[RMDB]
RNA sequence: GGGAACGACUCGAGUAGAGUCGAAAAGUAGGGACAGUAUUAGUAGGACCAACACCUGUAAAUAUAAUUGGAAGAAAUAUUUUGACACAAUUGGGUUGUACUCUAGUGUUCCCAAUUAGUUCAAUUGGCGCAUAAGAGUAUUCGUACUCUUAUGCGCAAAAGAAACAACAACAACAAC
Reactivity to 2A3 in 0.01 (KOAc 150mM, MgCl2 10mM, bicine 150mM(pH8.5), 24C), signal-to-noise 3, nucleotides 027 to 126: g170u140a010g000g000g010a000c000a000g090u060a050u150u070a020g130u030a010g080g000a040c010c050a050a000c010a120c060c010u050g060u110a000a110a000u070a030u010a010a190u050u110g030g020a060a040g060a100a190a000u090a080u040u110u040u180g060a050c010a000c000a160a100u050u040g110g000g000u020u010g100u050a000c000u040c020u030a020g050u000g010u020u030c000c000c000a060a090u170u150a020g040u020u030c040a010a030u010u040g060
Reactivity to DMS in 0.01 (KOAc 150mM, MgCl2 10mM, bicine 150mM(pH8.5), 24C), signal-to-noise 2, nucleotides 027 to 126: g030u000a070g010g010g000a010c080a060g020u040a030u080u000a080g020u010a050g000g020a180c070c070a040a080c080a110c110c060u000g010u000a060a020a050u000a030u030a070a120u010u010g010g060a140a140g000a090a050a100u000a100u030u020u050u000g010a120c110a100c030a000a120u000u000g010g020g010u000u020g000u000a070c020u000c070u000a010g010u000g000u000u000c010c000c000a050a090u000u010a090g000u000u000c030a010a190u030u020g000
Overview: This 177-nucleotide RNA was probed chemically with 2A3 and DMS. It was measured as part of the RMDB libraries RFM100 and RFMREP.